[RMDB]
RNA sequence: GGGAACGACUCGAGUAGAGUCGAAAAGAGAUACUGGAUAGUAGAAUGAGGUGUCACGGUCUCUACUAUCUAGUAUCAGAACGACAGGUAGACUAGAUUGUGAUACCUCAUGUCUAUCCGUCGUAAAGUAACUGUUUGUAUUCGUACAAGCAGUUACAAAAGAAACAACAACAACAAC
Reactivity to 2A3 in 0.01 (KOAc 150mM, MgCl2 10mM, bicine 150mM(pH8.5), 24C), signal-to-noise 9, nucleotides 027 to 126: g120a000g000a000u030a030c020u030g000g000a000u000a000g020u010a010g040a130a020u030g000a010g020g020u070g050u070c030a000c020g020g010u010c040u000c010u070a060c000u000a000u000c000u010a010g000u000a010u000c000a000g040a020a010c020g010a000c000a020g000g000u000a000g000a020c030u010a010g000a020u010u030g010u020g040a030u030a030c000c000u000c000a010u050g000u000c000u000a010u010c000c010g010u020c010g010u040a040a070a040
Reactivity to DMS in 0.01 (KOAc 150mM, MgCl2 10mM, bicine 150mM(pH8.5), 24C), signal-to-noise 9, nucleotides 027 to 126: g000a110g000a080u010a020c080u010g010g000a010u000a000g000u020a070g010a080a030u010g000a020g000g010u010g010u020c070a050c020g000g000u000c020u010c080u010a090c000u000a010u000c000u000a080g010u010a020u010c080a070g010a040a080c080g010a020c050a030g010g010u000a010g010a170c140u010a090g000a020u000u010g000u010g000a090u010a050c020c020u000c010a030u000g000u000c000u000a000u000c000c030g000u000c060g010u010a060a080a090